Structure probing data (DMS and 2A3) for a 177-nucleotide construct. Source: RMDB library M2PK50, as collected in RNAgym. For 2A3 the reverse transcriptase was SuperScript II with manganese. The reactions ran in a buffer of 150 mM KOAc, 10 mM MgCl2 and 150 mM bicine (pH 8.5), at 24 C. For 2A3, 4,589 sequencing reads were counted.

RNA sequence: GGGAACGACUCGAGUAGAGUCGAAAACAUGACCUGUUCGCAGGUCAUGAAAGUGGACGAGGAGCGAUGAACCGACACAAAACAAGACAUCGCAAAAUAAAAAAAGCAAGUGCUUCGGCACUUGCAAGAAUGAAUCUUACUUCGGUAAGAUUCAUUCAAAAGAAACAACAACAACAAC
Reactivity to DMS in 0.01 (KOAc 150mM, MgCl2 10mM, bicine 150mM(pH8.5), 24C), signal-to-noise 3, nucleotides 027 to 126: c000a000u000g000a000c000c010u010g020u010u020c190g020c000a010g010g030u000c000a000u000g000a060a040a090g000u000g010g030a170c080g020a120g000g010a070g010c000g010a010u010g010a090a110c050c010g010a160c040a090c130a030a080a050a090c140a080a080g000a120c040a040u000c020g020c050a110a050a060a090u050a020a000a030a050a090a120a110g000c000a000a010g000u000g000c000u000u010c160g030g010c000a010c000u000u000g000c010a030a010
Reactivity to 2A3 in 0.01 (KOAc 150mM, MgCl2 10mM, bicine 150mM(pH8.5), 24C), signal-to-noise 3, nucleotides 027 to 126: c000a000u010g000a000c000c000u010g020u050u050c180g000c040a000g000g000u000c000a010u000g010a000a020a010g120u110g040g040a090c080g060a110g030g080a130g050c010g000a000u020g030a060a050c040c000g080a010c020a000c000a140a200a080a030c030a050a040g080a050c010a040u010c010g000c000a060a030a110a040u190a010a090a000a000a000a000a000g010c000a000a000g010u000g000c010u020u090c210g060g000c000a000c000u010u000g000c010a000a000